[RMDB]
RNA sequence: GGGAACGACUCGAGUAGAGUCGAAAACGGUGGAUAAGCAACGUCUCCAGGGCAUUACAGGCGGCUGGGUAUUCACAUUUAGAGUCUCUGACUGGAGGGAAGAAGAAUAAAGAGUGAGUGCUGUGCACAUAAAAUGCAGCUUCGGCUGCAUUUUAUGAAAAGAAACAACAACAACAAC
Reactivity to 2A3 in 0.01 (KOAc 150mM, MgCl2 10mM, bicine 150mM(pH8.5), 24C), signal-to-noise 2, nucleotides 027 to 126: c060g010g030u050g050g000a030u050a130a060g030c020a050a060c030g030u010c030u030c050c010a040g030g060g000c050a070u120u160a080c040a070g010g020c030g040g000c050u030g000g050g000u060a060u050u060c050a010c010a040u090u110u070a060g000a030g050u030c010u000c050u100g090a120c020u050g030g060a020g100g000g000a000a050g040a050a000g020a050a040u150a100a120a030g090a010g020u030g010a050g020u040g000c060u050g030u040g000c020a010
Reactivity to DMS in 0.01 (KOAc 150mM, MgCl2 10mM, bicine 150mM(pH8.5), 24C), signal-to-noise 5, nucleotides 027 to 126: c120g010g020u000g010g010a050u000a050a060g000c050a060a070c070g000u010c030u000c040c050a090g010g010g010c070a060u000u000a090c180a090g010g010c070g010g010c080u000g000g000g010u000a030u000u000c060a050c070a090u000u000u000a070g010a120g000u000c020u000c030u000g010a120c050u000g020g010a090g000g000g010a070a050g010a080a070g010a070a070u010a030a030a070g010a080g010u000g010a070g010u000g010c020u000g020u010g000c080a130
An RNA of 177 nucleotides, treated with 2A3 and DMS and read out base by base. Source: RMDB library OK2TST, as collected in RNAgym. 2A3 adducts were read by reverse transcription with SuperScript II with manganese. For 2A3, 2,730 sequencing reads were counted. The RNA was probed in 150 mM KOAc, 10 mM MgCl2 and 150 mM bicine (pH 8.5) at 24 C.